[RMDB]
RNA sequence: GGGAACGACUCGAGUAGAGUCGAAAAGGGGUAACUAUGACCCUCUCAAGGUAGCGUAAUACCUAGCCGCUUAAUUGGCGGCUCGCAUGAAGGUUCAACGAGAGUCCCACUGUCCCCACAUUCAGCCUCGUCUCUAUGUAUUCGUACAUAGAGACGAAAAAGAAACAACAACAACAAC
Reactivity to DMS in 0.01 (KOAc 150mM, MgCl2 10mM, bicine 150mM(pH8.5), 24C), signal-to-noise 7, nucleotides 027 to 126: g020g000g010g010u010a090a100c090u030a130u020g010a060c030c000c020u010c080u000c070a110a060g010g000u010a020g000c250g010u040a110a060u000a030c020c010u000a070g000c000c000g010c010u000u020a110a110u030u030g000g000c000g010g000c000u000c180g010c150a070u020g010a060a050g010g000u000u000c070a040a100c160g010a080g000a180g000u010c010c010c000a100c090u020g010u000c010c000c000c120a100c230a100u010u010c080a070g010c300c070
Reactivity to 2A3 in 0.01 (KOAc 150mM, MgCl2 10mM, bicine 150mM(pH8.5), 24C), signal-to-noise 9, nucleotides 027 to 126: g030g010g000g010u050a040a040c040u050a100u180g040a040c000c020c000u010c020u010c010a040a030g060g000u040a030g060c120g140u160a180a060u030a090c010c010u010a010g000c000c010g010c020u080u110a150a080u240u260g020g000c000g000g000c000u000c010g040c010a060u150g030a070a030g050g000u070u090c030a050a030c080g040a010g010a010g130u050c000c000c000a080c030u030g050u060c000c000c030c000a030c000a060u130u140c050a020g050c010c020